[RMDB]
RNA sequence: GGGAACGACUCGAGUAGAGUCGAAAAAGUGUCUAAUGGGCAUAGAGUUUCAGUGUUACAAGGUGAAAAGUUCUAGAGUUAUGCUGCCCAGCAGUGUGAAUAUACUUUAUUGUUCUGUACACUUAACGAUGAAUUAUACGUUCGCGUAUAAUUCAUCAAAAGAAACAACAACAACAAC
Reactivity to 2A3 in 0.01 (KOAc 150mM, MgCl2 10mM, bicine 150mM(pH8.5), 24C), signal-to-noise 5, nucleotides 027 to 126: a010g020u000g000u000c010u070a140a140u220g070g000g010c010a030u040a060g090a020g030u020u050u080c050a020g030u010g030u100u070a040c040a120a030g010g030u060g040a040a030a010a050g040u070u010c070u100a050g010a010g080u010u020a010u080g020c020u020g010c060c120c050a010g000c000a010g000u030g000u020g060a060a020u100a010u020a100c010u030u090u080a230u130u090g020u090u040c010u020g000u020a000c020a000c000u050u060a080a010c090
Reactivity to DMS in 0.01 (KOAc 150mM, MgCl2 10mM, bicine 150mM(pH8.5), 24C), signal-to-noise 8, nucleotides 027 to 126: a090g010u000g000u000c040u010a110a110u010g010g010g010c010a040u000a070g010a110g020u000u000u000c040a040g010u000g010u010u010a060c130a080a080g010g000u000g000a030a050a050a050g010u000u000c120u000a100g010a120g010u000u000a050u000g010c030u000g000c010c080c100a140g010c020a020g030u000g020u000g010a040a070u000a080u000a070c040u000u000u000a070u020u000g000u010u000c040u000g010u000a060c060a030c010u000u010a070a110c200